[RMDB]
This 177-nucleotide RNA was probed chemically with 2A3. The reactions ran in a buffer of 150 mM KOAc, 10 mM MgCl2 and 150 mM bicine (pH 8.5), at 24 C.

RNA sequence: GGGAACGACUCGAGUAGAGUCGAAAACGUUUGUUUUUAGCGAGAAAACAAUUAGAGUUCUAUUCGACUCAGUGCGAUUUAGAAUUGUAUUUUACGAGCUUAUCACGCAAAACAAUUGUAUAUAAAGGAUAGUUCCCCACUUCGGUGGGGAACUAUCAAAAGAAACAACAACAACAAC
Reactivity to 2A3 in 0.01 (KOAc 150mM, MgCl2 10mM, bicine 150mM(pH8.5), 24C), signal-to-noise 1, nucleotides 027 to 126: c080g000u090u000u000g000u000u000u010u000u080a010g000c060g000a060g070a110a000a000a000c040a000a000u160u090a060g050a000g150u000u020c000u060a000u000u000c000g070a070c060u020c070a150g000u210g300c020g020a060u000u230u000a000g000a020a000u000u040g110u080a020u000u050u030u030a140c020g000a000g050c050u080u080a010u060c000a000c100g000c000a020a020a020a020c120a000a000u080u000g000u220a020u050a000u170a250a210a000g200
The data come from the RNA Mapping Database (RMDB), library OK1LIB.